Chemical mapping of a 177-nucleotide RNA with DMS and 2A3. For DMS, 1,336 sequencing reads were counted. Source: RMDB library M2PK50, as collected in RNAgym. DMS adducts were read by reverse transcription with MarathonRT.
RNA sequence: GGGAACGACUCGAGUAGAGUCGAAAAUCCAGUACGUUCGCGUACUGGAAAAGUCGCGGCUUGAGGGCGUGUACGGCAGCGCACACACACGACCCUCAACCCAAAGUCCGUACUUCGGUACGGACAAGGGAUUUUACUUGUUCGCAAGUAAAAUCCCAAAAGAAACAACAACAACAAC
Reactivity to DMS in 0.01 (KOAc 150mM, MgCl2 10mM, bicine 150mM(pH8.5), 24C), signal-to-noise 2, nucleotides 027 to 126: u000c000c000a000g010u000a000c000g010u000u000c140g030c000g030u000a010c000u020g000g000a000a010a030a090g000u010c100g020c150g000g000c260u000u000g000a020g010g010g010c000g010u000g000u000a080c090g000g000c130a120g000c120g000c070a070c050a110c110a070c050a010c030g000a110c000c000c000u000c000a000a010c050c000c010a080a070a150g000u000c000c000g010u000a000c000u000u020c110g020g010u000a000c000g000g000a000c000a010a030
Reactivity to 2A3 in 0.01 (KOAc 150mM, MgCl2 10mM, bicine 150mM(pH8.5), 24C), signal-to-noise 2, nucleotides 027 to 126: u020c010c000a010g000u000a000c020g010u000u060c130g000c000g120u010a000c000u010g000g010a030a010a010a010g050u050c050g000c090g100g000c130u000u020g010a010g000g020g010c020g000u000g010u020a060c090g060g020c060a160g100c100g010c090a010c000a000c010a020c000a000c110g300a300c020c020c000u000c000a010a010c010c000c010a030a080a000g000u030c000c010g000u000a010c000u020u080c220g090g010u010a010c000g000g000a000c000a000a040